[RMDB]
RNA sequence: GGGAACGACUCGAGUAGAGUCGAAAAAGCCGCUAAGUAAUGCUGUAAGGCUCAGUGCAAUCAUUGAUGUACGAAUUUUCAUAACACUUUCUUCCUGUGGUUAUGGGGUAUUUAUUGCUACAUUACAGUUAAAGGGACCAUUCGUGGUCCCUUUAACAAAAGAAACAACAACAACAAC
Reactivity to DMS in 0.01 (KOAc 150mM, MgCl2 10mM, bicine 150mM(pH8.5), 24C), signal-to-noise 2, nucleotides 027 to 126: a110g030c070c020g030c140u020a060a100g010u000a070a040u000g010c030u010g010u010a060a120g010g010c040u010c060a080g010u000g030c130a100a120u010c070a080u000u000g010a040u010g000u000a040c110g010a030a060u000u010u000u020c010a020u000a010a040c040a060c010u010u000u000c130u000u000c080c100u000g020u010g000g010u000u000a020u000g000g000g000g000u010a030u020u000u020a100u020u000g000c030u000a050c040a020u000u000a050c120a130
Reactivity to 2A3 in 0.01 (KOAc 150mM, MgCl2 10mM, bicine 150mM(pH8.5), 24C), signal-to-noise 1, nucleotides 027 to 126: a000g080c010c030g020c060u020a000a070g080u100a090a090u090g050c060u040g060u080a110a050g000g000c010u010c060a010g020u000g020c070a010a100u120c040a150u050u210g050a060u060g030u020a000c000g020a030a020u050u010u010u130c010a060u030a080a010c010a010c070u070u180u080c030u130u110c050c030u000g080u130g100g040u020u020a010u010g000g000g010g020u060a070u020u170u020a140u050u060g000c010u010a020c010a010u000u050a030c000a010
Structure probing data (DMS and 2A3) for a 177-nucleotide construct. DMS adducts were read by reverse transcription with MarathonRT. Values cover nucleotides 27 to 126. It was measured as part of the RMDB library OK2TST.